[RMDB]
RNA sequence: GGGAACGACUCGAGUAGAGUCGAAAAGCUAGUCGGAGACGACUAGCAACGAUCAGUUCGCUGAUCGGAACGUGCAUUCAAGUACGCUAGAAGCACGAAUAGGCGACGCGUAGCGUAAAACUGAGAAAGCAGAUAACAAAAAUAAAAAGGCGUCGCGCCUAUCCCGUACGUUCGCGUACGGGAUAGGAAAAGAAACAACAACAACAAC
Reactivity to 2A3 in 0.01 (KOAc 150mM, MgCl2 10mM, bicine 150mM(pH8.5), 24C), signal-to-noise 1, nucleotides 027 to 156: g010c000u000a000g000u000c020g010g000a060g000a090c010g000a010c010u000a000g000c000a000a000c000g000a000u000c000a000g000u060u070c130g000c140u000g000a000u000c000g000g060a110a020c010g010u000g030c060a220u010u060c010a040a000g150u020a010c010g000c010u040a010g040a070a000g040c010a000c020g010a110a120u260a230g040g000c000g000a000c000g010c010g040u050a000g010c020g030u010a010a010a040a090c010u040g010a000g110a120a110a000g130c040a010g010a110u160a220a080c060a080a100a110a050a050u300a100a060a010a000a010g060g000c030g000u010c030g000c000g000